An RNA of 177 nucleotides, treated with DMS and 2A3 and read out base by base. For DMS, 1,414 sequencing reads were counted. It was measured as part of the RMDB library OK1LIB. High DMS reactivity at an A or C suggests that its Watson-Crick edge is free. Values cover nucleotides 27 to 126. 2A3 adducts were read by reverse transcription with SuperScript II with manganese. For DMS the reverse transcriptase was MarathonRT.

[RMDB]
RNA sequence: GGGAACGACUCGAGUAGAGUCGAAAAUAAUACCAUUUCUAAGGGAACUAAUACCUUAAUACUAUUGAAUGAAGACUCCAGAUUCAAUAAUAAUUGAAAGGCUCUCUAUCUUAUGCAAUAGUUAUACCAGAUACCUUACCUUCGGGUAAGGUAUCUGAAAAGAAACAACAACAACAAC
Reactivity to DMS in 0.01 (KOAc 150mM, MgCl2 10mM, bicine 150mM(pH8.5), 24C), signal-to-noise 1, nucleotides 027 to 126: u070a060a190u020a210c000c010a220u010u040u080c100u010a060a030g000g000g000a060a160c120u060a050a130u050a080c010c040u030u000a010a100u050a030c000u000a000u000u000g000a080a000u000g000a000a010g010a040c220u020c020c040a100g000a190u000u010c000a000a020u000a030a140u040a020a110u070u040g000a120a010a080g020g000c210u010c010u010c000u000a130u000c090u020u050a000u010g000c020a000a000u000a000g000u010u030a060u030a040c180
Reactivity to 2A3 in 0.01 (KOAc 150mM, MgCl2 10mM, bicine 150mM(pH8.5), 24C), signal-to-noise 5, nucleotides 027 to 126: u140a000a040u060a080c010c000a030u100u070u080c060u100a040a030g010g010g020a030a060c120u120a200a070u150a240c000c000u060u070a090a020u080a140c000u000a010u050u000g030a030a060u080g040a060a020g010a030c110u030c070c010a070g080a240u030u010c020a020a020u150a140a080u130a110a090u010u040g000a020a020a040g010g010c020u020c010u000c000u030a060u230c020u100u080a050u130g020c000a010a020u000a030g020u120u090a130u040a180c040